RNA sequence: GGGAACGACUCGAGUAGAGUCGAAAAAAAAAGAUAUGGAGCCAGAACUACUCGUGAGUGGACCGAAGAACUUUAUCGGAAACGAUAAAGGGAGGUCCACGAACGAGCUGGCUCCUAAGUCAAAAAAUCUAAACGUAUUGUUCGCAAUACGUUUAGAAAAAGAAACAACAACAACAAC
Reactivity to DMS in 0.01 (KOAc 150mM, MgCl2 10mM, bicine 150mM(pH8.5), 24C), signal-to-noise 3, nucleotides 027 to 126: a020a060a090a140a110g010a030u010a300u020g000g010a020g040c000c010a010g010a120a030c050u020a300c000u000c010g010u000g000a300g000u000g000g000a010c010c010g000a090a180g030a130a110c000u000u000u000a010u000c000g000g020a100a080a140c000g010a000u010a000a000a010g000g000g020a040g010g020u000c000c010a010c000g010a110a010c000g000a000g000c000u000g000g020c000u000c000c000u000a000a070g000u010c010a000a060a090a100a090a080